The record gives the reactivity of an RNA of 177 nucleotides to DMS and 2A3. For DMS the reverse transcriptase was MarathonRT. Conditions: 150 mM KOAc, 10 mM MgCl2 and 150 mM bicine (pH 8.5), 24 C. For 2A3 the reverse transcriptase was SuperScript II with manganese.
[RMDB]
RNA sequence: GGGAACGACUCGAGUAGAGUCGAAAAGAAGCGUAAUCGCAAGUUAGGGAUUGUGGUGAAUAUCAACCUGACAGAGCUGAAGCGGAUCGGCAAUCAAGAAGCUUCCGGCGAACAACGCCUAUAGAAAGGGAUAAAUUAACUUCGGUUAAUUUAUCCCAAAAGAAACAACAACAACAAC
Reactivity to DMS in 0.01 (KOAc 150mM, MgCl2 10mM, bicine 150mM(pH8.5), 24C), signal-to-noise 5, nucleotides 027 to 126: g020a190a170g000c010g000u010a080a120u000c000g030c000a160a090g000u000u020a010g000g000g000a190u010u030g010u020g040g010u020g010a150a100u050a040u000c050a040a100c000c000u000g020a030c040a300g000a050g000c140u030g010a050a060g010c010g000g010a140u010c080g010g000c300a150a070u030c050a060a040g000a300a140g000c000u020u000c030c040g000g000c020g000a010a030c150a130a030c020g000c000c010u010a100u020a070g010a070a070a130
Reactivity to 2A3 in 0.01 (KOAc 150mM, MgCl2 10mM, bicine 150mM(pH8.5), 24C), signal-to-noise 5, nucleotides 027 to 126: g110a060a000g010c010g000u020a080a030u050c010g020c050a050a070g020u020u060a040g000g000g070a210u090u110g080u080g170g060u170g110a110a040u180a030u190c010a010a040c010c010u030g010a010c010a040g110a010g030c110u080g000a030a010g010c010g010g030a030u050c030g040g010c080a030a100u070c030a130a140g080a070a000g030c000u030u000c010c010g040g000c000g010a010a000c030a030a000c020g000c000c010u130a130u030a120g200a070a050a040